[RMDB]
RNA sequence: GGGAACGACUCGAGUAGAGUCGAAAAUGUACUAAAGCCGGUACAGCAGCAAAGAUGAGCAUCAAACGCCAACCAAUAUUUACCGGAUCAUAGUGCGCAAACCAUGCUGCUACUGCAUUCGCAACUAGGAUCAGUACGUAUUCGUACGUACUGAUCCAAAAGAAACAACAACAACAAC
Reactivity to DMS in 0.01 (KOAc 150mM, MgCl2 10mM, bicine 150mM(pH8.5), 24C), signal-to-noise 2, nucleotides 027 to 126: u000g050u000a040c020u000a050a130a230g000c020c000g030g000u000a030c270a040g010c060a050g050c030a080a130a060g010a120u000g000a140g010c020a090u010c100a030a060a080c160g000c000c050a120a090c090c060a110a100u000a060u000u030u000a040c080c020g000g020a070u000c080a070u000a010g010u010g010c050g020c080a030a050a100c070c110a080u010g020c060u010g020c040u010a060c110u000g000c060a060u000u000c110g010c080a060a080c160u010a060
Reactivity to 2A3 in 0.01 (KOAc 150mM, MgCl2 10mM, bicine 150mM(pH8.5), 24C), signal-to-noise 3, nucleotides 027 to 126: u020g000u010a030c020u080a060a110a160g050c020c000g040g020u060a090c040a080g040c020a000g000c030a070a020a060g050a100u130g040a010g050c010a040u100c080a130a040a090c110g000c020c000a030a050c030c010a050a030u100a110u180u120u080a020c020c030g030g020a000u070c000a060u040a040g040u030g010c010g000c040a050a030a050c030c000a020u060g010c010u040g000c010u030a050c030u040g010c000a080u040u160c050g020c030a030a060c050u090a090